[RMDB]
RNA sequence: GGGAACGACUCGAGUAGAGUCGAAAAUAGCCGUUCGCGGCUACACCAUGCGUACUACUUGAGAGGCUAUGGGAGUAUUCCAGUCCCAAAUAGGACUGAAAUACGAAGAACAUAGCUACCCACCUCAAGUAUCGCCCUCCGCAUCUUUCGAGAUGAACUACCUAGAAAGGUUCGCCUUUCUAGGUAGAAAAGAAACAACAACAACAAC
Reactivity to DMS in 0.01 (KOAc 150mM, MgCl2 10mM, bicine 150mM(pH8.5), 24C), signal-to-noise 2, nucleotides 027 to 156: u000a020g030c000c000g030u000u000c280g040c030g020g010c000u000a020c050a150c040c030a090u000g010c020g010u010a060c060u000a010c000u000u010g010a030g020a260g040g010c000u000a020u000g030g000g000a300g030u010a010u000u000c020c000a020g010u010c000c000c010a080a110a150u000a030g000g030a010c000u010g020a000a020a010u000a040c000g000a100a230g020a110a170c000a030u000a010g010c000u000a010c030c010c020a300c120c000u020c000a020a010g020u010a020u010c040g000c010c070c010u000c120c030g000c030a020u000c050u000u000u000c090g000a130g020a080u000g000a100a300
Reactivity to 2A3 in 0.01 (KOAc 150mM, MgCl2 10mM, bicine 150mM(pH8.5), 24C), signal-to-noise 6, nucleotides 027 to 156: u040a000g000c010c000g010u040u030c300g010c020g100g000c000u020a030c030a040c010c030a090u160g000c010g040u090a130c030u000a000c000u030u000g000a010g000a000g030g000c000u000a000u000g010g020g000a070g020u000a000u010u000c020c000a010g000u010c010c020c020a150a300a220u300a080g000g000a000c000u000g000a010a000a000u010a000c020g050a220a050g010a030a000c000a010u000a000g000c000u030a030c010c000c020a080c010c000u010c000a000a010g010u010a020u130c010g000c010c000c010u060c020c050g020c020a020u030c020u040u150u150c230g130a050g020a050u120g020a060a060